[RMDB]
RNA sequence: GGGAACGACUCGAGUAGAGUCGAAAACGUUACAUGGAUAAACCAAGCCGUGAUGGUAUGUCUAUUGAUGUAGCUGAUGAUUAUUAUGGUGGGUUAGAUGUUCAUUACUCCAGUGGAGUGUAUAACACGUCCCCAGCAUAUUCGUAUGCUGGGGACGAAAAGAAACAACAACAACAAC
Reactivity to DMS in 0.01 (KOAc 150mM, MgCl2 10mM, bicine 150mM(pH8.5), 24C), signal-to-noise 2, nucleotides 027 to 126: c130g020u010u010a010c050a010u000g030g020a060u000a010a040a070c040c250a170a200g040c030c040g000u000g030a110u020g020g000u010a130u010g010u000c010u010a040u000u010g010a040u000g040u000a030g030c020u000g020a080u000g000a070u010u000a070u000u000a020u020g000g050u000g010g010g000u000u020a040g010a080u000g000u010u000c100a020u000u000a060c020u000c030c050a140g000u000g000g000a010g010u010g010u010a050u000a010a030c050a090
Reactivity to 2A3 in 0.01 (KOAc 150mM, MgCl2 10mM, bicine 150mM(pH8.5), 24C), signal-to-noise 1, nucleotides 027 to 126: c050g060u060u040a000c010a030u040g000g020a020u010a140a060a000c000c010a060a100g080c010c000g130u100g050a100u090g000g030u100a040u130g010u000c000u020a100u000u260g100a020u020g010u030a020g000c040u030g030a090u140g030a030u080u130a030u130u090a050u150g020g010u050g020g000g070u050u040a080g000a050u100g060u090u020c050a020u020u070a020c000u030c010c010a000g110u150g110g050a040g020u030g010u000a090u020a080a040c070a010
An RNA of 177 nucleotides, treated with DMS and 2A3 and read out base by base. The reactions ran in a buffer of 150 mM KOAc, 10 mM MgCl2 and 150 mM bicine (pH 8.5), at 24 C. Source: RMDB library OK2TST, as collected in RNAgym. For 2A3, 628 sequencing reads were counted.